[RMDB]
RNA sequence: GGGAACGACUCGAGUAGAGUCGAAAAACUGCAUCUACGGAUGCAGACCUACGUUCAUCCAAUUUAUUUGGACGCAUGAAAUGAGAAUAGGGAACGGGAUUCUCAUACGCAGGCUACGGCCUGCGAAAAAACUCCUUAUGCUUCGGCAUAAGGAGAACAGAAGAGAAGGGUUCGCCCUUCUCUUCUGAAAAGAAACAACAACAACAAC
Reactivity to DMS in 0.01 (KOAc 150mM, MgCl2 10mM, bicine 150mM(pH8.5), 24C), signal-to-noise 1, nucleotides 027 to 156: a160c020u020g030c000a000u000c010u010a160c300g090g030a050u000g000c040a010g020a070c090c020u000a020c000g000u000u000c010a050u000c080c120a090a110u000u000u000a120u030u010u000g010g000a000c020g000c010a090u020g010a150a120a080u000g020a090g000a100a140u020a140g030g010g000a040a060c040g000g000g000a300u000u010c000u000c000a080u000a090c030g000c020a010g020g030c030u000a110c260g040g020c000c010u000g000c040g000a000a020a010a100a060a010c000u010c010c000u000u010a040u000g030c000u000u020c300g060g060c020a000u000a010a000g000g000a000g000a030a130
Reactivity to 2A3 in 0.01 (KOAc 150mM, MgCl2 10mM, bicine 150mM(pH8.5), 24C), signal-to-noise 2, nucleotides 027 to 156: a000c010u000g000c000a000u000c010u020a040c170g160g000a010u000g010c000a000g010a000c000c010u020a030c020g010u000u010c000a000u000c020c000a050a040u100u230u110a180u050u130u140g000g020a020c000g020c030a040u170g080a140a170a040u010g000a000g000a010a010u010a030g030g010g030a020a000c000g000g000g000a000u000u000c000u000c000a000u030a050c010g020c000a000g010g010c000u030a100c300g100g030c030c010u000g000c010g010a000a000a000a000a000a000c000u000c000c000u000u000a000u010g010c010u030u040c220g100g000c010a000u000a000a000g010g000a000g000a000a010